This 177-nucleotide RNA was probed chemically with 2A3 and DMS. The data come from the RNA Mapping Database (RMDB), libraries RFM100 and RFMREP. 2A3 adducts were read by reverse transcription with SuperScript II with manganese. The reactions ran in a buffer of 150 mM KOAc, 10 mM MgCl2 and 150 mM bicine (pH 8.5), at 24 C. DMS adducts were read by reverse transcription with MarathonRT.
RNA sequence: GGGAACGACUCGAGUAGAGUCGAAAAGAUGAUGAUCAGUGCGGCCUAGUCCUGAGCGUGAAGCAGGUGUGUGGCUGUCCGUCUAGCUGACUCCCUAUGGAGUUUGUCCGUGCGGACUUGGCCGCCUGUUUACGUAAAGUUUCGACUUUACGUAAACAAAAGAAACAACAACAACAAC
Reactivity to 2A3 in 0.01 (KOAc 150mM, MgCl2 10mM, bicine 150mM(pH8.5), 24C), signal-to-noise 9, nucleotides 027 to 126: g110a030u210g010a020u080g020a030u120c070a030g040u060g210c000g000g000c000c010u030a000g010u000c000c020u110g120a050g040c030g040u210g070a040a000g020c040a030g050g020u050g020u040g030u060g130g070c050u040g100u020c010c010g020u020c030u040a040g010c010u020g020a020c000u030c000c000c020u080a180u300g020g000a020g010u030u070u110g070u050c020c010g020u070g030c050g000g000a000c000u000u020g000g000c000c000g000c000c000u000
Reactivity to DMS in 0.01 (KOAc 150mM, MgCl2 10mM, bicine 150mM(pH8.5), 24C), signal-to-noise 9, nucleotides 027 to 126: g000a080u010g010a100u010g000a090u010c080a060g010u020g020c010g020g000c010c010u000a030g010u010c010c010u010g010a200g010c020g010u020g010a110a070g010c030a050g000g010u000g010u010g020u000g010g000c040u000g000u010c030c020g010u000c060u000a090g010c020u000g000a030c010u000c010c000c300u020a160u030g020g000a030g000u000u000u010g010u010c030c030g010u000g010c300g000g000a020c010u000u010g010g010c000c000g020c000c020u000